[RMDB]
RNA sequence: GGGAACGACUCGAGUAGAGUCGAAAAGCUGAUGACAACCGUGACACGCAGAAUUCUCCUUCCCCGAACAUCAUGUUCGGAUCCUCGAUGACGCCUUCUCCGAGCACGUCAUGGCGCUCCGCGUCGAGUAGAGCCUGGGCGACGGGCUCGUACUCGGGCGCGUAGUGACUUUCGAGUCACUACGCGCAAAAGAAACAACAACAACAAC
Reactivity to 2A3 in 0.01 (KOAc 150mM, MgCl2 10mM, bicine 150mM(pH8.5), 24C), signal-to-noise 2, nucleotides 027 to 156: g000c000u040g090a070u120g020a010c060a110a120c030c080g040u060g070a020c010a030c120g070c020a010g050a060a120u140u050c040u100c010c010u060u110c010c040c000c000g000a000a000c000a080u300c050a090u250g030u020u000c000g040g040a020u070c000c060u060c040g140a150u150g000a040c080g000c000c000u150u070c040u110c060c030g000a020g050c040a020c100g040u000c040a040u040g020g020c040g010c010u050c060c050g000c000g140u050c000g000a010g000u000a010g000a000g030c020c020u060g010g070g010c150g050a080c000g040g000g000c030u000c000g000u010a000c000u000c020g060g000